RNA sequence: GGGAACGACUCGAGUAGAGUCGAAAAGGCGGAAGCGGGGCUUAGCGAGUUUCACUUUGCACGCAUGUUUCGCCAGAGUGUGGGAAUGGCACCGCAUCAGUAUGUGCUGAAACAGCGGCUGGCCCGUGCGGAAGCGCUCGUGCGUCACGGUACGCAGGAGCCUAGGCUUUUUCGAAAGCCUAGGCUCAAAAGAAACAACAACAACAAC
Reactivity to 2A3 in 0.01 (KOAc 150mM, MgCl2 10mM, bicine 150mM(pH8.5), 24C), signal-to-noise 1, nucleotides 027 to 156: g190g000c000g000g030a000a000g050c090g000g000g060g040c030u100u130a000g010c000g010a050g040u020u140u080c030a040c090u070u130u270g020c050a050c070g000c090a160u050g070u000u060u040c090g000c020c000a000g020a240g040u030g010u060g140g000g000a130a160u090g050g000c080a080c100c000g050c000a070u110c000a010g160u090a190u290g060u150g000c040u040g010a000a000a000c020a050g170c080g040g050c000u000g010g000c080c000c020g000u050g010c000g000g000a000a000g000c000g020c040u010c000g070u060g080c020g000u000c030a050c260g050g120u050a000c020g010c010a020g010

An RNA of 207 nucleotides, treated with 2A3 and read out base by base. Source: RMDB library OK3TST, as collected in RNAgym. 2A3 adducts were read by reverse transcription with SuperScript II with manganese.